Conditions: 150 mM KOAc, 10 mM MgCl2 and 150 mM bicine (pH 8.5), 24 C. An RNA of 177 nucleotides, treated with 2A3 and DMS and read out base by base. In probing experiments dimethyl sulfate is read out at A N1 and C N3, which are open when not base-paired. 2A3 adducts were read by reverse transcription with SuperScript II with manganese. For 2A3, 5,758 sequencing reads were counted. The data come from the RNA Mapping Database (RMDB), library OK1LIB.

RNA sequence: GGGAACGACUCGAGUAGAGUCGAAAACAACUGGCUGUUUCCGGUGUCAGUUUUCGACACGCGCGGCGGUGUGUACCCCUGGGAGGGUAGGUACCACUACGCUACGCAGCAGCCUUAGCUACGCCGGCAACCGCAAACAUUUCGAUGUUUGCGGUUGAAAAGAAACAACAACAACAAC
Reactivity to 2A3 in 0.01 (KOAc 150mM, MgCl2 10mM, bicine 150mM(pH8.5), 24C), signal-to-noise 5, nucleotides 027 to 126: c030a010a040c050u070g060g020c010u030g030u030u050u050c020c020g020g000u000g000u020c060a070g010u020u010u100u180c050g010a030c010a010c090g000c000g000c010g020g000c010g000g010u020g030u050g000u000a000c000c010c000c010u060g020g090g020a160g020g080g040u110a220g060g000u010a010c030c000a020c020u130a090c040g000c010u030a010c010g010c020a060g000c010a010g010c000c000u000u000a010g000c030u050a020c030g020c010c000g030g000
Reactivity to DMS in 0.01 (KOAc 150mM, MgCl2 10mM, bicine 150mM(pH8.5), 24C), signal-to-noise 1, nucleotides 027 to 126: c080a120a160c270u000g000g000c020u010g000u010u000u020c000c040g000g030u020g000u000c070a050g020u020u020u000u000c060g000a000c000a100c080g020c000g060c120g040g000c000g020g010u020g000u060g030u000a020c040c010c000c000u010g020g110g030a230g070g000g000u000a000g000g000u000a000c040c000a000c020u030a140c130g000c000u010a080c030g010c030a040g000c140a070g010c010c020u000u000a030g000c010u030a050c060g000c000c000g000g030